Conditions: 150 mM KOAc, 10 mM MgCl2 and 150 mM bicine (pH 8.5), 24 C.
The record gives the reactivity of an RNA of 177 nucleotides to DMS.
For DMS, 2,581 sequencing reads were counted.
It was measured as part of the RMDB library M2PK50.
RNA sequence: GGGAACGACUCGAGUAGAGUCGAAAACAUUAGCCGUUCGCGGCUAAUGCCGACUGUCUUGUUUGAUGGUAGAGUGGAAGGUCAGGUAGACCUUUUUAGAAAUCGCCCAUUCAUUCGUGAAUGGGAAAGCAUGAUAAGUCUUCGGACUUAUCAUGCUAAAAGAAACAACAACAACAAC
Reactivity to DMS in 0.01 (KOAc 150mM, MgCl2 10mM, bicine 150mM(pH8.5), 24C), signal-to-noise 2, nucleotides 027 to 126: c000a000u000u000a000g010c000c010g040u010u010c190g070c010g020g010c000u000a010a000u000g010c030c040g040a060c040u010g000u000c040u000u000g000u000u000u000g000a030u000g010g000u000a090g010a160g040u010g010g000a020a010g000g000u000c010a150g010g020u030a150g010a030c000c000u000u010u000u000u000a130g010a010a090a050u000c160g000c010c000c000a000u010u000c000a060u000u000c250g010u000g010a020a000u000g000g010g010a000a010